[RMDB]
RNA sequence: GGGAACGACUCGAGUAGAGUCGAAAAUCAAGAGACUGCACUCGAACGUGGAGCGCCUGAACACGCGCUGGAGUGCGGUGUGCAACCAAUUGGGUGAAAGAAUGCGCUCAUGCGAGACGGCUAUCGAUCCCUAAAUAGGUUUCGACCUAUUUAGGGAAAAAGAAACAACAACAACAAC
Reactivity to DMS in 0.01 (KOAc 150mM, MgCl2 10mM, bicine 150mM(pH8.5), 24C), signal-to-noise 9, nucleotides 027 to 126: u010c080a120a100g000a160g010a040c010u000g000c010a020c010u000c010g000a060a070c040g000u000g010g000a100g020c060g010c050c090u010g010a100a100c100a070c060g010c010g010c030u000g010g010a040g010u000g010c000g010g010u000g020u000g010c080a100a110c040c020a100a150u000u000g010g010g010u000g000a070a080a140g000a100a090u010g010c040g010c010u000c030a070u000g010c180g000a070g000a080c110g000g000c040u000a090u010c070g010a170
Reactivity to 2A3 in 0.01 (KOAc 150mM, MgCl2 10mM, bicine 150mM(pH8.5), 24C), signal-to-noise 8, nucleotides 027 to 126: u080c020a050a020g040a010g030a100c010u010g010c020a010c010u010c040g140a300a150c030g030u060g050g070a050g040c060g040c020c040u070g070a090a010c020a000c050g080c000g000c030u020g080g040a070g030u030g000c020g000g000u020g010u070g000c010a040a050c010c010a030a070u100u090g070g000g000u050g030a060a090a070g130a070a060u130g020c020g010c010u010c010a010u080g010c000g010a030g030a060c050g040g000c010u030a040u160c030g050a040